[RMDB]
RNA sequence: GGGAACGACUCGAGUAGAGUCGAAAACAAGGGCCGUUCGCGGCCCUUGAAAUAAAGAAAACGUGGUACGUACGAUAACGUACAAAAACAUAUAAACAAAUAAAAGAAUGGACUUCGGUCCAUUCAACAAGAAUAGAUAGUUCGCUAUCUAUUCUUGAAAAGAAACAACAACAACAAC
Reactivity to 2A3 in 0.01 (KOAc 150mM, MgCl2 10mM, bicine 150mM(pH8.5), 24C), signal-to-noise 5, nucleotides 027 to 126: c000a000a010g000g010g010c040c000g040u090u110c210g020c020g100g000c000c000c010u000u010g000a000a000a000u080a000a030a010g150a010a140a010a020c020g010u040g070g000u020a000c000g010u010a000c020g070a180u010a050a000c000g000u010a000c010a010a070a010a000a000c060a010u290a020u120a260a060a030c040a020a190a040u260a110a130a020a040g000a000a000u000g010g000a000c010u050u060c260g020g000u000c000c000a000u000u000c000a000a000
Reactivity to DMS in 0.01 (KOAc 150mM, MgCl2 10mM, bicine 150mM(pH8.5), 24C), signal-to-noise 3, nucleotides 027 to 126: c010a000a020g000g000g040c010c020g030u000u030c220g010c010g020g020c010c000c000u000u000g010a020a080a090u010a040a080a150g000a070a080a080a300c030g000u000g020g010u000a000c000g010u000a040c030g010a110u010a010a010c020g000u000a000c000a040a050a040a100a060c080a080u010a120u010a100a080a140c040a050a090a080u000a080a080a080a140g000a020a000u000g000g000a000c000u000u010c190g040g010u000c000c000a020u000u000c000a060a140
Chemical mapping of a 177-nucleotide RNA with 2A3 and DMS. In probing experiments dimethyl sulfate is read out at A N1 and C N3, which are open when not base-paired. The data come from the RNA Mapping Database (RMDB), library M2PK50. 2A3 adducts were read by reverse transcription with SuperScript II with manganese.